The record gives the reactivity of an RNA of 207 nucleotides to 2A3 and DMS.
Reactivities are given for positions 27 through 156.

[RMDB]
RNA sequence: GGGAACGACUCGAGUAGAGUCGAAAAAGCGGCUCACUAGCUACUGAAACCGGAGACAUUAAUUUGGUGGAGCAGUUGCAGGAUAGGAAUACAGAAUUAAGUUAUCAGUGGCUACUAAAUGAUUUGAUGAGCAGACAACAUUAUUUUACUCAAUGGACACUGUCCAAAGGUUCGCCUUUGGACAGUGAAAAGAAACAACAACAACAAC
Reactivity to 2A3 in 0.01 (KOAc 150mM, MgCl2 10mM, bicine 150mM(pH8.5), 24C), signal-to-noise 3, nucleotides 027 to 156: a020g060c030g060g000c010u000c000a030c020u000a000g020c000u020a010c000u010g040a060a040a000c020c080g080g000a040g030a020c100a080u100u190a130a090u120u100u090g040g000u030g000g040a020g000c050a050g030u120u140g020c020a000g000g060a060u100a040g020g080a060a030u120a070c020a030g050a050a060u130u050a190a020g000u050u070a100u120c000a010g000u010g020g020c010u010a020c020u030a020a150a140u170g040a070u140u110u130g040a050u020g000a010g020c020a020g040a030c020a040a030c010a040u010u120a080u090u160u060u020a070c060u060c070a040a030u040g040g000a010
Reactivity to DMS in 0.01 (KOAc 150mM, MgCl2 10mM, bicine 150mM(pH8.5), 24C), signal-to-noise 1, nucleotides 027 to 156: a120g050c050g040g020c010u000c060a060c060u010a070g030c040u000a060c010u030g010a010a090a110c060c010g030g020a160g010a080c060a130u000u010a060a160u010u000u010g020g060u010g000g050a130g020c000a090g000u000u010g000c060a090g060g010a060u000a080g000g000a130a060u020a230c060a240g010a110a070u000u010a090a040g020u000u010a110u000c050a050g010u000g000g000c000u000a140c060u000a040a050a080u010g010a160u010u000u010g020a110u010g010a080g020c070a120g030a080c010a060a080c030a050u000u000a090u000u000u000u000a060c040u000c060a080a140u000g010g000a300